[RMDB]
RNA sequence: GGGAACGACUCGAGUAGAGUCGAAAACUGACGGGGCUGCUCAGUGGGCAACCAGUGAAGGCACGGGCGCUCGGAAAUGGCGCUAGAUUAGAUACAAAUACCAGCAUGUGGCAUCCAAAGGGCGCGGUAUGCUAGUACAGUUCGCUGUACUAGCAUAAAAAGAAACAACAACAACAAC
Reactivity to DMS in 0.01 (KOAc 150mM, MgCl2 10mM, bicine 150mM(pH8.5), 24C), signal-to-noise 3, nucleotides 027 to 126: c040u010g040a100c070g010g010g000g020c030u000g030c050u000c030a080g040u000g020g010g010c130a060a100c040c010a060g010u010g020a090a190g010g000c050a060c100g010g000g020c030g020c030u000c100g000g010a050a100a080u000g000g000c060g010c010u000a050g000a080u010u010a060g000a120u000a090c120a050a060a120u000a080c070c020a030g010c040a050u000g020u010g010g000c060a060u000c030c050a040a110a160g010g000g010c050g030c060g000g010
Reactivity to 2A3 in 0.01 (KOAc 150mM, MgCl2 10mM, bicine 150mM(pH8.5), 24C), signal-to-noise 2, nucleotides 027 to 126: c000u020g000a040c040g030g000g000g060c040u060g030c030u060c040a110g030u060g000g030g030c010a010a080c010c000a010g000u020g110a070a070g040g000c030a000c070g040g050g030c010g000c030u050c080g040g100a080a120a030u120g040g000c040g000c020u010a000g010a090u110u190a020g040a060u100a130c070a020a180a010u090a120c000c030a020g060c020a060u100g010u050g120g000c010a020u000c030c000a060a050a060g040g000g000c050g000c020g000g020